Description:
The record gives the reactivity of an RNA of 177 nucleotides to DMS and 2A3. DMS adducts were read by reverse transcription with MarathonRT. Values are in units of 0.01, from 0 to 300, in steps of 10. The data come from the RNA Mapping Database (RMDB), library TTRDEL. Conditions: 150 mM KOAc, 10 mM MgCl2 and 150 mM bicine (pH 8.5), 24 C.
RNA sequence: GGGAACGACUCGAGUAGAGUCGAAAAGAUAUGGACGUUGGUAGGCGAUGAGAUGCCUCGGAAACGAGCAUCGAGCCUAUUGACGUCCUAAGUCAAAGGAUGUUAACGGUUCGCCGUUAACAUCCAACCCUGUCGUCCAGUUCGCUGGACGACAGGGAAAAGAAACAACAACAACAAC
Reactivity to DMS in 0.01 (KOAc 150mM, MgCl2 10mM, bicine 150mM(pH8.5), 24C), signal-to-noise 1, nucleotides 027 to 126: g000a050u010a300u020g020g000a010c000g030u000u000g000g020u000a000g000g000c000g010a200u030g000a180g000a010u000g010c140c030u000c000g000g030a170a070a130c000g000a030g000c000a000u000c010g030a120g010c000c000u010a010u000u000g010a010c000g000u000c000c000u000a020a080g010u000c030a110a110a070g010g000a000u000g020u000u000a000a010c000g010g060u000u000c300g020c000c000g000u000u000a000a000c000a000u010c000c010a030a050
Reactivity to 2A3 in 0.01 (KOAc 150mM, MgCl2 10mM, bicine 150mM(pH8.5), 24C), signal-to-noise 1, nucleotides 027 to 126: g030a000u060a050u130g020g000a010c000g000u000u010g030g000u000a000g000g020c120g080a300u210g080a120g010a130u010g060c090c070u030c000g050g010a090a090a000c010g010a010g000c010a030u000c010g010a020g000c010c000u020a010u010u000g010a010c000g000u010c000c010u000a000a000g020u000c030a060a010a150g030g000a000u020g000u000u000a000a000c000g000g070u050u080c300g090c120c000g000u000u010a000a000c000a010u000c000c000a010a000